[RMDB]
RNA sequence: GGGAACGACUCGAGUAGAGUCGAAAAGAUAUGGACCUAUCAGCUAUAUACUACCCACCACGCAAUCAAGCUUCGGAAACGAAGCUUGAUUGCGUGAGGUAUAAUAAUGCUGUAAGGGUCCUAAGUCGUCCUCUUAUAUCUUCGGAUAUAAGAGGACAAAAGAAACAACAACAACAAC
Reactivity to DMS in 0.01 (KOAc 150mM, MgCl2 10mM, bicine 150mM(pH8.5), 24C), signal-to-noise 2, nucleotides 027 to 126: g010a100u010a300u030g010g010a020c000c010u010a300u010c010a020g000c010u000a290u000a070u000a080c300u000a030c010c000c070a300c170c000a010c000g000c000a040a000u020c000a010a030g000c030u000u000c020g030g010a160a140a260c010g010a040a000g000c010u000u000g000a000u000u010g000c010g010u010g000a010g010g000u000a010u000a070a060u010a050a200u010g020c000u010g000u050a150a280g010g010g010u000c000c010u060a020a130g010u000c110
Reactivity to 2A3 in 0.01 (KOAc 150mM, MgCl2 10mM, bicine 150mM(pH8.5), 24C), signal-to-noise 1, nucleotides 027 to 126: g070a060u180a070u300g010g000a000c000c010u030a210u270c020a010g000c010u040a080u010a000u010a300c050u040a020c010c000c070a050c040c000a000c040g090c080a010a000u020c000a000a050g110c070u110u000c040g060g120a300a100a080c080g000a040a000g050c010u000u020g010a000u000u000g050c020g020u000g000a000g020g000u030a000u000a040a080u020a030a000u190g000c030u060g100u180a230a300g070g000g000u070c010c020u030a090a060g230u110c050